An RNA of 177 nucleotides, treated with 2A3 and read out base by base. The reactions ran in a buffer of 150 mM KOAc, 10 mM MgCl2 and 150 mM bicine (pH 8.5), at 24 C. It was measured as part of the RMDB library OK1LIB.
[RMDB]
RNA sequence: GGGAACGACUCGAGUAGAGUCGAAAAACGUCGGGAAUUUCGCCGAGAGCCGUUCGGCGGCGGCAGCGUCGGUGCCGGUGGCGCCGGCGAGGCCCAGUGCCACCGCGGACAUCGUUGGCUCAUGCCCCACGUGGGUGCACUUCGGUGCACCCACGUGAAAAGAAACAACAACAACAAC
Reactivity to 2A3 in 0.01 (KOAc 150mM, MgCl2 10mM, bicine 150mM(pH8.5), 24C), signal-to-noise 1, nucleotides 027 to 126: a010c050g030u050c050g010g000g070a180a190u070u080u160c130g040c040c010g090a140g000a000g040c030c060g000u000u070c100g040g010c000g030g000c040g000g000c030a000g040c010g020u020c000g000g000u020g020c000c000g300g080u300g000g000c000g000c000c000g010g000c000g000a000g000g000c000c010c000a010g010u010g080c000c000a010c000c000g000c020g000g000a000c030a090u100c150g120u080u240g060g000c030u040c050a010u090g000c020c000c000